This 177-nucleotide RNA was probed chemically with 2A3 and DMS.
DMS adducts were read by reverse transcription with MarathonRT.
Conditions: 150 mM KOAc, 10 mM MgCl2 and 150 mM bicine (pH 8.5), 24 C.
[RMDB]
RNA sequence: GGGAACGACUCGAGUAGAGUCGAAAAAGCAGUAUACGUACUGCAAGAAAUGGGAGUUCCUUGCAGCCCAAAGCUUCAAGGAUGAAAUUCUUCCUGCGGUUUUGGACUGAAGGGAGCUCCUACUUAAUCAUCUUCAUACGUUCGCGUAUGAAGAUGAAAAAGAAACAACAACAACAAC
Reactivity to 2A3 in 0.01 (KOAc 150mM, MgCl2 10mM, bicine 150mM(pH8.5), 24C), signal-to-noise 5, nucleotides 027 to 126: a010g010c010a010g000u020a030u020a050c250g050u010a020c030u000g000c010a000a020g110a020a100a030u150g000g000g010a000g000u000u000c000c000u000u010g030c000a000g000c000c000c000a000a000a000g000c000u020u070c160a090a050g010g040a010u040g060a030a100a140u290u050c030u030u000c000c000u010g000c020g020g000u000u000u010u010g000g010a010c000u010g000a020a010g010g010g000a000g000c000u000c000c000u000a010c000u010u050a030a040
Reactivity to DMS in 0.01 (KOAc 150mM, MgCl2 10mM, bicine 150mM(pH8.5), 24C), signal-to-noise 3, nucleotides 027 to 126: a060g020c010a000g010u000a020u010a110c220g020u000a010c000u010g000c030a150a050g010a050a110a110u010g000g010g010a040g020u000u000c000c000u000u000g000c010a010g000c030c000c010a000a000a000g000c000u020u000c100a300a030g010g000a000u000g010a060a120a210u020u030c010u010u000c010c000u000g000c300g010g000u000u000u010u010g000g000a020c000u010g000a020a050g020g010g000a020g010c000u010c010c000u000a000c010u000u010a050a260